[RMDB]
RNA sequence: GGGAACGACUCGAGUAGAGUCGAAAAAACGAACGUCGGAACAGGGAAACUCAAGUCAAUCUGGGGCCCGUGAAAAGGCGAGUACGGUGUUCGUACCGAGAUCCGACACAGGUGCUCUGGCAGAGGAACAUCUGAUAUGUUUCGACAUAUCAGAUGUAAAAGAAACAACAACAACAAC
Reactivity to 2A3 in 0.01 (KOAc 150mM, MgCl2 10mM, bicine 150mM(pH8.5), 24C), signal-to-noise 9, nucleotides 027 to 126: a000a000c030g020a030a010c020g010u010c010g020g020a030a040c010a100g040g010g020a090a100a060c010u020c050a100a050g100u080c050a070a190u050c050u050g000g000g050g080c000c020c010g020u040g040a070a100a020a020g090g000c030g020a020g010u020a010c010g000g040u070g070u120u160c010g000u010a020c000c010g020a020g000a060u040c010c010g050a020c030a000c010a060g060g020u100g040c010u020c010u050g050g000c040a030g010a040g080g040a040
Reactivity to DMS in 0.01 (KOAc 150mM, MgCl2 10mM, bicine 150mM(pH8.5), 24C), signal-to-noise 9, nucleotides 027 to 126: a080a030c050g010a040a050c060g020u000c010g020g010a070a110c080a100g010g000g000a130a090a080c030u010c070a060a060g000u020c150a070a140u030c060u000g010g010g010g000c010c010c020g000u010g010a070a060a080a130g000g010c040g000a090g010u010a070c020g000g010u010g000u020u010c030g010u010a090c010c020g000a090g010a090u010c020c020g000a110c070a080c070a060g000g010u020g010c040u010c020u010g000g010c080a060g000a150g000g000a100